[RMDB]
RNA sequence: GGGAACGACUCGAGUAGAGUCGAAAAUCAGAUCAGGACUCUGAGGGGGCGUAUCGAUCACUUUACCACAGUUAUUAAGGCGCCAGGUGCGUACAUUGCACUCUUUAUGUUUCUGAUCAUGUCCUGGUCCUAGUCCAUCGUUCGCGAUGGACUAGGAAAAAGAAACAACAACAACAAC
Reactivity to 2A3 in 0.01 (KOAc 150mM, MgCl2 10mM, bicine 150mM(pH8.5), 24C), signal-to-noise 4, nucleotides 027 to 126: u090c010a020g000a040u020c000a010g020g010a000c010u040c030u100g010a060g090g000g050g050g000c000g000u030a050u300c040g060a010u040c040a000c020u090u090u190a180c100c050a060c070a060g010u010u000a030u000u080a090a070g060g010c020g000c020c030a040g070g000u020g000c010g030u120a170c100a190u050u290g000c000a020c010u080c030u030u120u010a130u140g100u010u010u030c030u020g040a030u030c070a070u120g040u000c000c000u000g000g010
Reactivity to DMS in 0.01 (KOAc 150mM, MgCl2 10mM, bicine 150mM(pH8.5), 24C), signal-to-noise 3, nucleotides 027 to 126: u020c120a040g050a010u000c020a000g000g050a000c010u000c210u000g000a060g020g000g020g020g030c010g000u010a010u000c120g020a010u000c080a050c010u000u000u040a210c130c160a100c230a030g010u010u000a070u030u000a080a110g010g030c000g000c000c000a140g000g000u000g000c000g000u020a130c250a100u040u050g040c030a040c020u000c060u000u000u030a030u040g010u030u030u010c010u000g000a150u030c040a100u000g000u010c030c000u020g000g020